[RMDB]
RNA sequence: GGGAACGACUCGAGUAGAGUCGAAAAUGUCUCAACCUAUGUGAUAAUCUUACAAGCCACUAAAUUUACUUUGUGGAACUACUUGUUUGAGACUAUUCCCACACAGUUGUUCCCACUCUUAUUUGUGAAAUCUGGUUGUUCGCAACCAGAAAAAGAAACAACAACAACAAC
Reactivity to 2A3 in 0.01 (KOAc 150mM, MgCl2 10mM, bicine 150mM(pH8.5), 24C), signal-to-noise 9, nucleotides 027 to 129: u150g000u000c000u010c000a020a050c020c020u120a100u190g080u030g090a110u080a300a090u100c050u050u080a030c030a010a040g020c010c000a030c020u180a030a030a160u230u290u120a120c180u100u050u030g010u000g000g000a030a020c030u100a030c000u110u040g030u020u040u040g000a000g000a000c000u010a030u010u020c000c020c000a000c010a000c000a010g010u010u010g010u010u000c010c040c010a040c010u110c010u110u230a290u240u150u090g130u040g070a060a050a020
Reactivity to DMS in 0.01 (KOAc 150mM, MgCl2 10mM, bicine 150mM(pH8.5), 24C), signal-to-noise 5, nucleotides 027 to 129: u060g040u030c010u020c000a020a040c020c110u100a050u110g040u060g050a000u090a090a140u050c110u030u030a100c110a090a080g020c040c050a010c040u090a050a100a100u090u120u080a050c230u100u060u020g010u070g000g030a070a070c070u080a120c020u030u040g040u030u010u000g020a060g010a040c020u020a080u020u000c000c060c010a110c160a070c160a030g010u040u000g010u000u000c080c030c030a100c090u060c130u040u050a100u140u140u000g030u010g070a090a100a050
Chemical mapping of a 170-nucleotide RNA with 2A3 and DMS.
Reactivities are given for positions 27 through 129.
For 2A3, 16,686 sequencing reads were counted.
Conditions: 150 mM KOAc, 10 mM MgCl2 and 150 mM bicine (pH 8.5), 24 C.
The data come from the RNA Mapping Database (RMDB), library 15KLIB.